Structure probing data (DMS and 2A3) for a 207-nucleotide construct. The RNA was probed in 150 mM KOAc, 10 mM MgCl2 and 150 mM bicine (pH 8.5) at 24 C. The 2A3 profile rests on 1,101 reads.
RNA sequence: GGGAACGACUCGAGUAGAGUCGAAAAACAAGCCUGCUGGCGGUGAUGGUGGCCUGUACCGUGCUGCGGACUCAUCUUUUCAUAUGGACGGUUUUCUCCCCUAAGUUUUUGUAUAGCAUGGCUUGGAGUUUAGUACAGCAUUUGGCUAUCAACCUCCUAAUAUAGCUCCUUUCGAGGAGCUAUAUUAAAAAGAAACAACAACAACAAC
Reactivity to DMS in 0.01 (KOAc 150mM, MgCl2 10mM, bicine 150mM(pH8.5), 24C), signal-to-noise 3, nucleotides 027 to 156: a120c020a040a090g010c010c010u010g020c040u010g020g020c060g020g030u020g010a120u010g010g020u000g020g020c020c020u000g010u000a050c090c050g030u000g020c030u000g040c070g020g000a070c040u000c040a090u000c020u000u000u000u010c070a150u000a120u000g020g010a040c080g010g010u000u010u000u000c060u000c030c000c030c030u000a070a180g010u000u000u000u000u000g020u010a140u000a090g010c030a060u010g020g010c030u010u000g000g020a070g010u000u000u000a090g040u010a040c030a040g010c010a130u000u010u000g020g020c000u000a080u000c050a060a090c040c010u000c020c020
Reactivity to 2A3 in 0.01 (KOAc 150mM, MgCl2 10mM, bicine 150mM(pH8.5), 24C), signal-to-noise 2, nucleotides 027 to 156: a000c030a030a010g050c000c020u040g050c010u030g010g010c040g010g030u050g040a170u090g000g050u010g010g030c010c010u010g050u080a100c030c080g000u020g020c000u020g000c020g010g020a010c010u010c010a080u080c010u030u110u130u120c040a060u150a110u230g030g030a020c010g040g010u070u030u180u030c060u050c020c010c000c050u090a060a060g030u010u010u070u150u130g010u040a060u030a030g000c030a020u060g000g000c000u000u030g010g000a010g010u080u070u080a060g040u120a000c010a010g000c010a020u100u160u100g050g000c000u000a000u030c000a020a110c000c000u030c030c010